[RMDB]
RNA sequence: GGGAACGACUCGAGUAGAGUCGAAAAAUUCAGGAGAGUAGAUGAUUCGCGUUAAGUGUGUGUGAAUGGGAUGUCGUCACACAACGAACCGAGAGCGCGGUGAAUCAUUGCAUCCGCUCCAAACGAACACGGAUCUGAUAUUCGUAUCAGAUCCGUGAAAAGAAACAACAACAACAAC
Reactivity to DMS in 0.01 (KOAc 150mM, MgCl2 10mM, bicine 150mM(pH8.5), 24C), signal-to-noise 1, nucleotides 027 to 126: a140u000u000c070a110g000g000a020g010a040g010u010a230g020a000u030g000a030u000u000c000g010c020g010u000u000a110a070g000u010g030u000g030u010g000u000g000a060a050u000g030g050g020a020u000g010u010c200g040u000c000a020c000a000c010a010a020c030g010a110a080c140c070g000a070g010a030g010c070g000c100g030g000u000g000a030a010u000c010a020u000u000g060c000a010u000c020c020g050c000u000c000c010a050a120a080c120g000a040a140
Reactivity to 2A3 in 0.01 (KOAc 150mM, MgCl2 10mM, bicine 150mM(pH8.5), 24C), signal-to-noise 1, nucleotides 027 to 126: a000u080u070c040a020g000g000a000g000a020g030u190a010g010a060u010g030a000u060u030c010g000c040g050u080u120a160a030g030u090g020u000g030u040g000u000g100a040a050u030g060g030g000a000u050g050u110c030g000u020c030a010c000a000c000a000a080c050g010a080a050c000c070g090a190g030a010g300c020g000c030g060g010u010g040a020a020u080c020a000u000u040g000c030a000u000c010c000g050c000u000c000c030a070a050a040c140g090a040a010
Source information: Source: RMDB library M2PK90, as collected in RNAgym. This 177-nucleotide RNA was probed chemically with DMS and 2A3. For DMS, 1,074 sequencing reads were counted. The reactions ran in a buffer of 150 mM KOAc, 10 mM MgCl2 and 150 mM bicine (pH 8.5), at 24 C. DMS adducts were read by reverse transcription with MarathonRT.